[RMDB]
RNA sequence: GGGAACGACUCGAGUAGAGUCGAAAAGAUAUGGAUCUUGGGAGUUCGUGUCGGAAACGACACAGAACGAAGAACACUGGAUCCUAAGUCAAAUCUGUACCCAAGAGUUCGCUCUUGGGUACAGAAAGCAUCACGUUUAGUUCGCUAAACGUGAUGCAAAAGAAACAACAACAACAAC
Reactivity to DMS in 0.01 (KOAc 150mM, MgCl2 10mM, bicine 150mM(pH8.5), 24C), signal-to-noise 2, nucleotides 027 to 126: g000a040u010a260u020g000g000a000u000c010u000u000g000g000g010a190g040u000u000c000g020u000g000u000c000g000g010a060a060a170c020g000a000c000a000c010a090g030a000a000c010g020a130a200g000a090a160c140a070c300u000g000g010a000u010c000c000u000a040a110g010u000c030a050a130a120u010c000u000g010u000a000c000c020c000a000a030g000a010g040u000u010c300g010c000u000c000u000u000g010g000g000u080a000c060a000g000a010a050a090
Reactivity to 2A3 in 0.01 (KOAc 150mM, MgCl2 10mM, bicine 150mM(pH8.5), 24C), signal-to-noise 1, nucleotides 027 to 126: g020a000u050a000u160g000g010a020u020c020u060u070g040g020g050a180g020u000u020c000g000u010g020u000c010g000g020a070a050a040c000g010a000c000a000c030a030g040a010a000c010g030a130a040g130a060a020c080a030c110u080g070g000a000u000c000c010u060a110a020g030u020c020a020a010a260u020c000u000g000u010a010c000c000c000a010a000g000a000g060u170u160c300g030c170u000c000u000u000g010g000g000u000a000c000a000g000a000a000a000